The data come from the RNA Mapping Database (RMDB), library OK2TRN. An RNA of 177 nucleotides, treated with DMS and 2A3 and read out base by base. 2A3 adducts were read by reverse transcription with SuperScript II with manganese. The RNA was probed in 150 mM KOAc, 10 mM MgCl2 and 150 mM bicine (pH 8.5) at 24 C.
RNA sequence: GGGAACGACUCGAGUAGAGUCGAAAAUGUAGCCACCAACGCCCCGCUGCCUACCCACGCCAAGAAGCUGACCGCCGGCCAGGUGGCCGAGCUGUUCGGCGUCCGAGUCGAGACCGUCCGCCGAUGGGCUAAAUGGGAAAUUCGUUUCCCAUUUAGCAAAAGAAACAACAACAACAAC
Reactivity to DMS in 0.01 (KOAc 150mM, MgCl2 10mM, bicine 150mM(pH8.5), 24C), signal-to-noise 7, nucleotides 027 to 126: u020g010u000a110g020c020c020a080c060c040a080a130c120g000c030c020c030c050g010c050u000g020c020c020u000a130c050c020c030a090c090g010c040c060a070a090g000a080a080g010c010u000g000a040c030c140g010c030c010g010g010c060c070a210g010g020u000g010g030c010c010g000a060g020c020u000g010u010u000c030g010g010c010g000u010c050c030g010a050g000u000c020g000a070g010a230c020c010g000u010c030c030g010c040c030g000a100u010g010g010
Reactivity to 2A3 in 0.01 (KOAc 150mM, MgCl2 10mM, bicine 150mM(pH8.5), 24C), signal-to-noise 3, nucleotides 027 to 126: u150g020u030a020g040c010c020a020c020c010a100a050c040g010c000c020c000c010g000c030u030g010c000c000u030a060c010c000c030a030c030g010c020c000a080a070g040a070a010g050c010u030g020a040c000c030g020c010c010g030g050c050c030a110g110g150u130g170g000c000c010g070a030g000c010u020g030u100u070c030g010g010c010g000u010c010c010g020a010g000u030c000g010a010g030a060c010c000g030u040c000c010g010c010c040g130a130u140g070g020